[RMDB]
RNA sequence: GGGAACGACUCGAGUAGAGUCGAAAAAACCGCCGCCCAUUUGUGAAGCGUGCGACAUGAUCAUGUACCAGUGCCCGUGUUUUGAUUUUAAUGCUUUAAAGAAAUCGUGCGCUGAGAGGACCUUCGCUGAUGAUUAUGUUAUUGAAGGUUUAGAUGGCAGUAUGACAGGGUUCGCCCUGUCAUACUGAAAAGAAACAACAACAACAAC
Reactivity to 2A3 in 0.01 (KOAc 150mM, MgCl2 10mM, bicine 150mM(pH8.5), 24C), signal-to-noise 2, nucleotides 027 to 156: a000a000c040c000g010c000c000g000c000c000c000a040u110u070u150g070u050g020a050a010g000c010g030u090g050c060g030a000c000a010u070g030a020u010c020a020u000g060u120a080c020c030a010g010u010g020c030c020c020g080u010g010u100u100u060u070g060a140u000u020u030u260a130a130u140g040c020u130u090u220a060a220a000g040a010a010a010u050c010g000u000g010c030g010c010u010g010a050g010a020g020g050a010c000c000u020u020c000g000c070u060g040a010u010g020a040u010u060a030u170g030u080u060a150u120u130g040a000a000g040g000u030u020u060a100g000a050u140g040g020
Reactivity to DMS in 0.01 (KOAc 150mM, MgCl2 10mM, bicine 150mM(pH8.5), 24C), signal-to-noise 2, nucleotides 027 to 156: a060a060c030c030g000c030c000g000c000c000c010a190u010u010u000g000u000g020a110a060g030c020g040u000g040c030g000a050c060a070u020g010a040u010c040a060u010g010u000a120c030c000a060g030u000g010c030c040c040g010u090g010u030u020u000u000g020a190u010u000u010u000a040a190u000g000c160u000u000u000a060a030a300g010a010a050a030u000c030g030u000g010c000g060c010u010g000a180g010a180g000g000a050c040c010u000u000c030g000c090u010g000a050u010g010a070u000u020a090u010g010u000u000a070u000u010g010a070a070g000g010u000u010u010a100g010a080u000g000g000
Record summary: An RNA of 207 nucleotides, treated with 2A3 and DMS and read out base by base. Source: RMDB library OK3TST, as collected in RNAgym. Values cover nucleotides 27 to 156.